The record gives the reactivity of an RNA of 177 nucleotides to DMS and 2A3. The RNA was probed in 150 mM KOAc, 10 mM MgCl2 and 150 mM bicine (pH 8.5) at 24 C.
[RMDB]
RNA sequence: GGGAACGACUCGAGUAGAGUCGAAAAGUCACCUGUGGUGUUGUGCAAGAAGGAGAAGCAAAGUCUGUCUAUGUAUUAUGAGAUAGCUACUUCUAUGGCUAGGAUAUAUGUUGUACAAGACCGGCUUUAAUAGUUAUCUAUUCGUAGAUAACUAUUAAAAAGAAACAACAACAACAAC
Reactivity to DMS in 0.01 (KOAc 150mM, MgCl2 10mM, bicine 150mM(pH8.5), 24C), signal-to-noise 9, nucleotides 027 to 126: g010u020c120a110c010c020u010g030u020g010g010u000g010u000u000g010u000g000c060a070a070g010a110a090g010g010a080g010a060a050g010c130a090a060a050g010u010c010u000g000u000c010u000a050u000g010u010a070u020u020a050u020g000a090g010a060u000a010g010c020u000a070c090u010u010c100u020a110u010g000g010c030u000a040g000g010a120u010a080u020a070u020g010u000u000g010u010a020c040a030a020g000a030c010c020g000g000c060u000u000
Reactivity to 2A3 in 0.01 (KOAc 150mM, MgCl2 10mM, bicine 150mM(pH8.5), 24C), signal-to-noise 9, nucleotides 027 to 126: g060u050c050a100c140c020u030g040u070g040g020u060g020u070u020g000u010g010c020a030a040g050a100a030g180g060a070g020a070a000g030c070a080a050a030g010u030c010u010g010u000c010u020a180u050g140u030a140u220u090a090u300g060a040g010a060u020a010g010c010u020a040c020u090u070c040u100a090u130g100g000c030u050a050g070g080a060u020a010u010a010u270g090u080u020g000u020a010c000a000a010g000a010c000c000g010g000c000u020u000